This 177-nucleotide RNA was probed chemically with 2A3 and DMS. Conditions: 150 mM KOAc, 10 mM MgCl2 and 150 mM bicine (pH 8.5), 24 C. The data come from the RNA Mapping Database (RMDB), libraries RFM100 and RFMREP.
RNA sequence: GGGAACGACUCGAGUAGAGUCGAAAAUGUUUUGUGUUUUGUUGGAUUCGUUACUCUCCACCGUCGCCGCCAUGUACAAUUCUCAAACUCUGACUUCUUGGAGGCAAUUCUUCCAAUUUGUUCCAACAUAUUCCCUAUCAUUCGUGAUAGGGAAUAUAAAAGAAACAACAACAACAAC
Reactivity to 2A3 in 0.01 (KOAc 150mM, MgCl2 10mM, bicine 150mM(pH8.5), 24C), signal-to-noise 7, nucleotides 027 to 126: u120g050u040u070u090u090g090u010g040u010u040u050u020g030u010u030g020g060a140u030u040c020g010u050u070a070c010u000c000u020c060c000a040c010c020g030u020c030g000c000c010g000c010c000a030u050g010u030a030c040a040a090u070u020c040u010c020a060a080a070c040u040c060u100g050a080c010u050u030c010u030u110g020g010a030g030g000c030a020a130u110u010c010u050u030c020c010a040a070u010u040u100g040u020u020c020c000a010a010c040
Reactivity to DMS in 0.01 (KOAc 150mM, MgCl2 10mM, bicine 150mM(pH8.5), 24C), signal-to-noise 9, nucleotides 027 to 126: u010g010u000u010u000u010g010u000g000u000u000u000u000g000u000u000g000g000a130u020u010c060g020u000u010a080c060u010c030u000c010c030a070c050c040g010u010c040g010c030c030g000c020c020a030u000g000u000a050c110a050a100u000u000c030u000c030a070a070a090c060u010c040u000g010a060c050u000u000c060u000u010g010g000a040g020g000c240a070a080u010u010c030u000u010c010c020a040a080u010u010u010g010u000u010c020c040a060a110c220